[RMDB]
RNA sequence: GGGAACGACUCGAGUAGAGUCGAAAACAGUAUGCCUUCGGGCAUACUGAAACCAGAGGGUAUCUGGCCCACGCUCCCAUGGGUGCCGGGAAUCCCAUCCCAAAACGGAUGUCUUCGGACAUCCGAACCGAGUUUUAUAGUUCGCUAUAAAACUCGGAAAAGAAACAACAACAACAAC
Reactivity to DMS in 0.01 (KOAc 150mM, MgCl2 10mM, bicine 150mM(pH8.5), 24C), signal-to-noise 2, nucleotides 027 to 126: c000a000g000u000a000u000g000c000c010u000u010c140g010g020g020c010a010u000a010c020u010g010a030a060a110c080c070a050g000a080g020g010g030u000a040u000c010u000g010g000c020c010c000a160c030g000c110u030c010c000c020a060u010g000g000g030u010g020c070c050g020g010g010a130a100u010c000c020c010a190u010c000c000c010a070a040a100a160c020g020g000a020u000g000u000c000u000u010c190g030g010a040c010a000u000c000c000g000a030a070
Reactivity to 2A3 in 0.01 (KOAc 150mM, MgCl2 10mM, bicine 150mM(pH8.5), 24C), signal-to-noise 2, nucleotides 027 to 126: c000a000g010u000a010u010g000c020c000u030u120c300g120g000g000c000a000u000a000c000u000g000a040a000a010c030c010a020g080a080g120g070g040u140a090u120c020u020g030g000c000c010c000a010c010g040c020u060c000c010c020a030u060g060g000g020u100g090c070c040g040g000g020a050a080u070c000c010c000a030u030c000c020c000a030a080a000a010c020g000g000a000u000g000u000c000u030u070c180g020g000a000c000a000u010c000c000g000a000a010